[RMDB]
Source: RMDB library OK3TST, as collected in RNAgym.
This 207-nucleotide RNA was probed chemically with 2A3 and DMS.
For 2A3, 1,800 sequencing reads were counted.
For DMS the reverse transcriptase was MarathonRT.
High DMS reactivity at an A or C suggests that its Watson-Crick edge is free.
2A3 is a SHAPE reagent: it acylates the 2'-hydroxyl of flexible nucleotides of all four kinds.
Conditions: 150 mM KOAc, 10 mM MgCl2 and 150 mM bicine (pH 8.5), 24 C.
RNA sequence: GGGAACGACUCGAGUAGAGUCGAAAAGCAUGCUGUCCCUGACCCAUGUUGCAACGGACAGUGUCCUUGACACUCCUCACAAAAUACCGCUGACAUAAGGCAUUUGUGUGUGUACUGGAAGCUUGGUAAAGGUUGGACACUAUAGCAGGACAGUAUACGUAAUUAAUCCCUUCGGGGAUUAAUUACGAAAAGAAACAACAACAACAAC
Reactivity to 2A3 in 0.01 (KOAc 150mM, MgCl2 10mM, bicine 150mM(pH8.5), 24C), signal-to-noise 4, nucleotides 027 to 156: g090c030a020u040g020c000u000g010u080c070c010c070u040g070a110c040c010c050a080u130g100u130u180g100c060a160a050c090g040g040a010c060a030g000u000g020u000c020c030u040u160g050a020c030a040c100u070c010c040u070c030a030c070a050a160a030a010u100a080c010c050g030c030u060g070a050c020a080u220a090a060g020g030c020a050u010u150u090g190u040g050u040g000u010g020u060a090c030u030g040g010a070a010g040c040u120u190g050g000u080a080a070a030g030g030u030u020g020g020a010c000a000c030u070a030u090a150g070c040a000g000g000a000c000a000g020u020a050u020a040
Reactivity to DMS in 0.01 (KOAc 150mM, MgCl2 10mM, bicine 150mM(pH8.5), 24C), signal-to-noise 2, nucleotides 027 to 156: g030c020a080u000g020c000u000g020u010c000c010c010u000g010a260c060c030c020a200u010g040u000u000g030c040a080a130c070g000g000a030c050a030g010u000g000u000c010c050u000u000g000a300c010a060c040u000c030c010u000c030a040c050a030a060a030a100u010a030c030c010g000c090u000g030a190c190a100u000a040a110g040g020c020a030u010u010u010g030u010g000u000g030u010g000u000a080c100u000g030g010a140a130g000c020u010u000g030g020u010a070a080a100g000g030u010u000g020g010a100c050a020c040u000a060u000a080g010c030a070g000g000a070c000a060g010u010a050u010a180